[RMDB]
RNA sequence: GGGAACGACUCGAGUAGAGUCGAAAAUUGAGGUUUGUGUAAGUGAAAUCUAUGAUGUUCACACAAUGACGAAAUCGCCUAAUAGCACAUCGUUCAGGAUGGAUUCUCGUGGUUAAGCAACACAUAACAAUUUGCAGUACUUCGGUACUGCAAAUUGAAAAGAAACAACAACAACAAC
Reactivity to 2A3 in 0.01 (KOAc 150mM, MgCl2 10mM, bicine 150mM(pH8.5), 24C), signal-to-noise 2, nucleotides 027 to 126: u080u070g070a100g120g090u020u110u040g060u050g040u010a210a140g010u030g050a110a040a040u040c080u090a100u090g030a030u060g030u140u070c010a000c000a010c010a100a040u060g010a000c000g000a050a000a130u030c030g010c000c030u120a200a090u060a040g000c040a040c000a120u040c040g000u150u160c060a030g020g040a160u080g000g040a030u100u000c070u010c060g000u010g000g040u000u030a020a040g030c000a060a000c030a030c000a000u090a070a030
Reactivity to DMS in 0.01 (KOAc 150mM, MgCl2 10mM, bicine 150mM(pH8.5), 24C), signal-to-noise 3, nucleotides 027 to 126: u000u000g020a110g010g020u000u000u000g020u000g010u010a130a160g010u010g010a080a060a040u010c040u010a060u020g020a030u000g000u010u000c030a050c070a100c170a080a070u000g000a020c040g000a040a070a080u010c180g010c010c000u000a090a060u000a150g000c040a090c210a020u000c050g000u010u000c050a060g000g020a210u010g000g000a080u000u010c210u000c040g020u000g000g010u000u000a050a260g010c070a040a030c040a010c080a070u000a080a130
The record gives the reactivity of an RNA of 177 nucleotides to 2A3 and DMS. 2A3 adducts were read by reverse transcription with SuperScript II with manganese. The 2A3 profile rests on 1,350 reads.